[RMDB]
RNA sequence: GGGAACGACUCGAGUAGAGUCGAAAAGAAAACAUAGCUAUCGGAAAGAACACUCUCACACGAAGAACGAUAGCUAUGGAAAAGAAAAGAAAAGAGUGUGAGAGGAAAGAGGAAACUCGAAGGGCGAGGGUUUACAUUACUUCGGUAAUGUAAACCCAAAAGAAACAACAACAACAAC
Reactivity to 2A3 in 0.01 (KOAc 150mM, MgCl2 10mM, bicine 150mM(pH8.5), 24C), signal-to-noise 2, nucleotides 027 to 126: g040a000a090a000a000c000a000u000a000g000c000u000a000u000c010g000g110a120a130a000g080a120a160c100a060c180u000c000u000c000a020c020a020c000g050a020a190g050a160a000c000g000a040u000a000g000c000u000a000u000g020g000a000a070a000a010g040a000a000a000a000g220a000a080a000a000g190a040g010u000g000u000g000a000g000a000g040g020a000a000a050g070a010g030g060a030a020a020c050u050c110g020a060a060g070g020g020c070g000a120
Reactivity to DMS in 0.01 (KOAc 150mM, MgCl2 10mM, bicine 150mM(pH8.5), 24C), signal-to-noise 1, nucleotides 027 to 126: g080a200a050a070a160c000a000u000a000g030c020u000a000u000c000g050g000a100a120a180g000a140a180c150a090c130u000c000u000c000a000c000a000c000g000a240a040g000a040a020c000g000a000u000a000g020c000u000a000u000g000g000a120a100a120a120g000a100a100a160a140g120a190a110a150a120g000a120g030u000g000u000g040a000g060a020g000g000a080a070a020g040a000g000g000a000a230a050c010u000c000g000a180a040g000g000g020c210g010a170